[RMDB]
RNA sequence: GGGAACGACUCGAGUAGAGUCGAAAAAAUGCGUAGUAUUACUUCGUACGAUUCCAGAGAAUAUAACCACUACAUCAUUGAUAACAUUCUAAAGAGAUUUAGACAACAGGAUGAAUCCAUCGUACAAGCCAUGUUGAUAAACUACUUACAUUACGGCACCCACGUACCAUUUCGAUGGUACGUGGGUAAAAGAAACAACAACAACAAC
Reactivity to 2A3 in 0.01 (KOAc 150mM, MgCl2 10mM, bicine 150mM(pH8.5), 24C), signal-to-noise 1, nucleotides 027 to 156: a000a000u070g000c000g010u000a000g060u010a000u050u280a140c000u050u090c040g000u000a050c000g060a060u100u090c080c040a100g020a000g020a090a030u210a020u130a220a070c060c000a050c060u210a060c000a060u190c050a050u030u120g100a070u070a200a000c020a070u110u110c090u160a080a000a000g070a010g020a070u090u040u080a040g000a020c060a130a050c070a150g080g060a010u030g020a000a010u050c080c010a010u020c010g000u030a030c000a050a040g000c000c000a030u090g030u000u110g160a170u190a120a080a020c020u080a010c010u000u120a030c060a160u000u070a030c030g020g020c120
This 207-nucleotide RNA was probed chemically with 2A3.